[RMDB]
Structure probing data (2A3 and DMS) for a 177-nucleotide construct. The reactions ran in a buffer of 150 mM KOAc, 10 mM MgCl2 and 150 mM bicine (pH 8.5), at 24 C. It was measured as part of the RMDB libraries RFM100 and RFMREP. For DMS the reverse transcriptase was MarathonRT.
RNA sequence: GGGAACGACUCGAGUAGAGUCGAAAAAACUUAAGCAUAUCAAUAAGCAGAGGAAAAGAAAAUAACUAUGAUUCCCUUAGUAACGGCGAGUGAACAGGGAAAAGCCCAAAUUUGUAAUCUGGCACUUCAGUAUAAACGUAUUCGUACGUUUAUACUGAAAAGAAACAACAACAACAAC
Reactivity to 2A3 in 0.01 (KOAc 150mM, MgCl2 10mM, bicine 150mM(pH8.5), 24C), signal-to-noise 6, nucleotides 027 to 126: a000a000c120u170u100a100a020g030c020a040u070a030u210c040a110a220u170a190a000g060c050a010g010a030g100g070a050a110a030a010g130a020a090a040a040u180a070a020c060u060a060u160g030a150u050u040c010c000c000u000u000a010g000u000a010a000c000g120g040c180g030a020g020u000g000a010a010c000a000g000g000g040a000a000a000a030g000c000c000c000a060a090a020u090u100u060g040u030a040a060u020c030u010g060g000c050a030c100u000u000
Reactivity to DMS in 0.01 (KOAc 150mM, MgCl2 10mM, bicine 150mM(pH8.5), 24C), signal-to-noise 3, nucleotides 027 to 126: a050a050c060u000u010a060a100g000c040a080u010a110u010c080a090a080u020a090a120g010c040a050g010a060g010g010a060a050a040a090g000a060a040a040a060u010a050a040c100u020a080u020g010a200u000u000c000c010c000u000u010a060g000u010a100a040c030g010g030c220g010a200g020u000g000a110a090c220a030g000g010g000a000a020a080a050g010c060c010c020a030a050a080u020u000u010g030u000a170a060u010c040u010g000g000c090a100c130u000u000